The data come from the RNA Mapping Database (RMDB), library OK1LIB. This 177-nucleotide RNA was probed chemically with 2A3 and DMS. Conditions: 150 mM KOAc, 10 mM MgCl2 and 150 mM bicine (pH 8.5), 24 C. DMS adducts were read by reverse transcription with MarathonRT. 2A3 adducts were read by reverse transcription with SuperScript II with manganese.
RNA sequence: GGGAACGACUCGAGUAGAGUCGAAAAGGCAAAAUAAUUCUACAAGAUUGUGGAAUUCACAAUCUAGUAUUGAUCAAAAAUUGGCAAAUCAAAUUAAUGAUCUUAGACAAACUGUCAUUUGGAUGGGGACAACUCUCAUGUUCGCAUGAGAGUUGUCAAAAGAAACAACAACAACAAC
Reactivity to 2A3 in 0.01 (KOAc 150mM, MgCl2 10mM, bicine 150mM(pH8.5), 24C), signal-to-noise 3, nucleotides 027 to 126: g040g040c030a000a000a020a290u210a050a150u110u110c090u110a030c050a120a020g010a010u030u000g020u090g040g170a130a160u300u190c010a000c000a000a000u000c000u020a000g000u020a040u040u150g000a010u020c010a010a050a050a000a000u040u210g030g100c070a000a000a210u100c080a000a000a120u190u050a020a040u040g020a000u010c000u020u080a050g060a140c030a080a220a030c040u090g020u060c040a170u050u030u060g170g000a130u110g000g000g060
Reactivity to DMS in 0.01 (KOAc 150mM, MgCl2 10mM, bicine 150mM(pH8.5), 24C), signal-to-noise 1, nucleotides 027 to 126: g000g000c110a040a050a150a110u020a030a090u020u000c010u000a000c000a290a020g000a030u000u040g000u000g000g000a300a100u020u000c120a000c080a020a010u000c000u000a040g000u000a070u060u010g000a060u030c080a000a000a230a000a010u100u000g000g000c220a260a000a180u020c000a110a000a010u000u000a080a300u000g000a040u000c010u000u010a130g000a100c190a060a200a100c170u020g000u000c010a040u010u000u000g000g000a030u000g000g010g010